[RMDB]
RNA sequence: GGGAACGACUCGAGUAGAGUCGAAAACGAACGCGUACAACUUGCGCAAGAAGGACUGGGCAUUGAGGCCCAGGCGCGGCAGGCACGUUAUCAGGCAUUUGCCCGCACCUUGUUGCCCGGUGAAGUGAGUUAACCUAACCUUCGGGUUAGGUUAACUAAAAGAAACAACAACAACAAC
Reactivity to DMS in 0.01 (KOAc 150mM, MgCl2 10mM, bicine 150mM(pH8.5), 24C), signal-to-noise 2, nucleotides 027 to 126: c100g020a070a120c130g030c020g020u000a090c180a230a060c130u000u000g040c070g000c020a120a030g000a080a020g020g020a300c030u010g000g000g010c000a050u010u020g010a080g000g000c230c040c030a010g000g000c010g030c190g020g000c040a010g010g000c060a060c040g020u030u010a160u000c150a110g000g000c030a060u020u010u000g020c010c000c030g000c030a300c000c020u000u000g000u000u010g000c000c010c150g000g000u030g020a080a140g010u000g000
Reactivity to 2A3 in 0.01 (KOAc 150mM, MgCl2 10mM, bicine 150mM(pH8.5), 24C), signal-to-noise 2, nucleotides 027 to 126: c000g040a050a000c060g070c040g060u130a050c050a150a100c110u070u130g000c000g000c050a000a020g050a040a040g040g030a050c030u000g000g020g020c030a030u030u300g170a080g020g110c000c010c010a000g020g020c000g040c040g010g000c010a000g010g050c000a050c270g060u110u080a150u190c110a050g000g120c060a050u200u000u060g020c050c000c060g000c020a040c010c000u030u020g120u060u020g000c090c000c000g000g020u020g060a030a030g030u100g060